[RMDB]
RNA sequence: GGGAACGACUCGAGUAGAGUCGAAAACUUUUGAUUUUGCACACAUGAAAGCGCCCCUCCGAAGUUUUGCUUUUGCGCUUUUGUUGGUCCAAUUUCAAAGCAAAGUGCGGCCAGCGAGGGAGCCGAAACUCAGCUCGUACUUCGGUACGAGCUGAGUAAAAGAAACAACAACAACAAC
Reactivity to 2A3 in 0.01 (KOAc 150mM, MgCl2 10mM, bicine 150mM(pH8.5), 24C), signal-to-noise 1, nucleotides 027 to 126: c000u020u010u020u070g190a190u000u070u150u140g050c100a050c000a000c000a010u090g020a020a000a000g000c010g000c050c000c010c030u030c040c070g080a080a080g020u000u120u190u200g140c080u060u150u190u130g000c000g020c000u040u020u000u030g020u020u000g000g070u120c010c000a000a010u020u090u000c010a010a010a040g090c040a020a110a040g120u070g080c000g050g000c030c000a020g070c160g080a110g000g050g000a020g000c000c000g000a030a000